[RMDB]
RNA sequence: GGGAACGACUCGAGUAGAGUCGAAAAGAUAUGGAUCCCGGAUCGCGAUAAGCUGAUACUCGGAAACGAGUGCAGCUUUUGACGCGAGAAGGGAUCCUAAGUCAAAAGUCGCAGUUCGCUGCGACAAGUAGAAGCACAGCUUCGGCUGUGCUUCUACAAAAGAAACAACAACAACAAC
Reactivity to DMS in 0.01 (KOAc 150mM, MgCl2 10mM, bicine 150mM(pH8.5), 24C), signal-to-noise 2, nucleotides 027 to 126: g000a030u020a300u030g000g040a020u030c000c000c000g000g030a300u000c000g110c000g040a210u010a030a010g020c000u000g030a080u050a020c050u000c000g000g010a120a130a110c000g050a000g010u000g000c000a000g000c000u020u010u000u000g000a190c050g040c000g020a000g030a300a290g000g000g030a000u000c000c000u010a010a150g000u000c090a130a200a110a120g000u000c000g000c040a010g000u000u020c260g020c010u000g000c010g020a000c000a000a100